[RMDB]
RNA sequence: GGGAACGACUCGAGUAGAGUCGAAAAGUGCAGUCUCGGCUCACUGCAACAUCCACCUUCCGGGUUCAAGCAAUUCUCGUGCCUCAGCCUCGCGAAUAGCUGGGAUUACAGUGCAAAGGGGAAGAGUCAGAAGGUGAAUAAAUACUCACAGCCGAAAUAUACUAGCCGUGUUCGCACGGCUAGUAUAAAAAGAAACAACAACAACAAC
Reactivity to 2A3 in 0.01 (KOAc 150mM, MgCl2 10mM, bicine 150mM(pH8.5), 24C), signal-to-noise 2, nucleotides 027 to 156: g050u040g030c000a000g000u000c040u000c180g000g000c010u020c060a020c000u000g000c010a000a020c000a050u070c000c000a000c010c000u000u010c030c030g150g030g080u040u040c080a140a050g040c030a110a270u050u000c020u050c050g040u050g020c000c000u080c010a020g010c010c010u110c020g080c050g060a090a040u080a180g000c000u010g000g000g060a030u070u110a100c070a000g030u020g240c050a040a040a090g030g000g000g010a000a130g000a010g050u060c000a020g010a040a000g020g010u030g030a010a000u040a000a040a000u110a040c040u070c040a080c050a040g010c010c000g010a020a030a000